[RMDB]
RNA sequence: GGGAACGACUCGAGUAGAGUCGAAAAACUGCCAUACGUGGCAGAAACACGCCUUACCAGGACUAAACAGCGUGUCUAAAAAACAGUCCUUCAUACCUGAUCUGGAGGGUAGAUCAGGAAUACUAGAAAAAUCGGGUGAAGUUCGCUUCACCCGAAACUGAUAAUGAGCCUUCGGGCUCAUUAUCAGAAAAGAAACAACAACAACAAC
Reactivity to 2A3 in 0.01 (KOAc 150mM, MgCl2 10mM, bicine 150mM(pH8.5), 24C), signal-to-noise 2, nucleotides 027 to 156: a000c000u000g000c000c000a030u020a070c160g110u040g000g000c000a000g020a000a010a010c000a000c000g000c000c000u010u060a020c010c030a000g000g000a000c000u030a100a080a000c010a000g000c010g000u000g020u040c050u060a000a000a030a000a000a030c060a000g000u020c010c000u020u120c080a080u080a130c000c010u000g000a000u000c000u010g090g050a040g060g050g030u070a000g000a000u000c020a000g010g000a000a020u110a060c070u070a050g130a000a120a010a040a060u010c000g000g000g000u000g000a000a010g010u040u150c150g030c060u000u010c000a000c000c000c000g000a000a020a000

This 207-nucleotide RNA was probed chemically with 2A3. It was measured as part of the RMDB library M2RFOK. For 2A3, 1,306 sequencing reads were counted. The RNA was probed in 150 mM KOAc, 10 mM MgCl2 and 150 mM bicine (pH 8.5) at 24 C.